[RMDB]
RNA sequence: GGGAACGACUCGAGUAGAGUCGAAAACAGGAGUUUAGCAUAGCUCCAUUCUACUAUGCAGCUAGUCGUCGUUUUCGACGUCUAGGAUAGACCGCUACAGCAGGGUCCAUGAACUGCUGAUUACCGCAUCUCGUAGCGCGGGUUCUGGCUACGUACAAGGUAUUAUUAUAUUCGUAUAAUAAUACCUAAAAGAAACAACAACAACAAC
Reactivity to DMS in 0.01 (KOAc 150mM, MgCl2 10mM, bicine 150mM(pH8.5), 24C), signal-to-noise 3, nucleotides 027 to 156: c020a140g000g000a080g020u000u000u010a110g020c030a040u000a010g000c010u020c090c300a150u010u000c010u010a020c020u000a010u010g020c010a300g010c020u000a020g020u000c010g020u000c010g040u000u010u000u010c040g010a020c000g010u010c000u000a020g010g010a260u010a060g000a100c030c010g000c050u000a110c030a060g070c060a050g010g030g020u000c020c130a140u020g010a040a080c010u000g000c010u000g010a190u000u000a080c020c020g010c060a190u000c060u000c050g020u000a050g030c030g020c030g020g000g010u000u010c060u000g030g000c030u000a040c030g000u000a090c050a190
Reactivity to 2A3 in 0.01 (KOAc 150mM, MgCl2 10mM, bicine 150mM(pH8.5), 24C), signal-to-noise 6, nucleotides 027 to 156: c040a040g010g010a010g010u030u080u160a020g040c010a010u010a020g000c010u000c000c010a050u120u050c010u060a090c010u000a010u020g020c010a040g070c020u000a010g000u010c000g000u000c010g020u060u080u170u300c040g020a000c000g000u000c000u000a000g010g000a020u070a060g000a010c010c000g010c050u090a050c020a000g000c000a010g020g000g000u020c150c030a150u170g090a080a020c000u000g000c000u010g020a040u020u160a050c010c020g000c030a040u030c060u020c100g000u010a000g000c030g000c020g040g040g000u060u100c090u090g050g000c010u010a010c010g040u030a040c040a080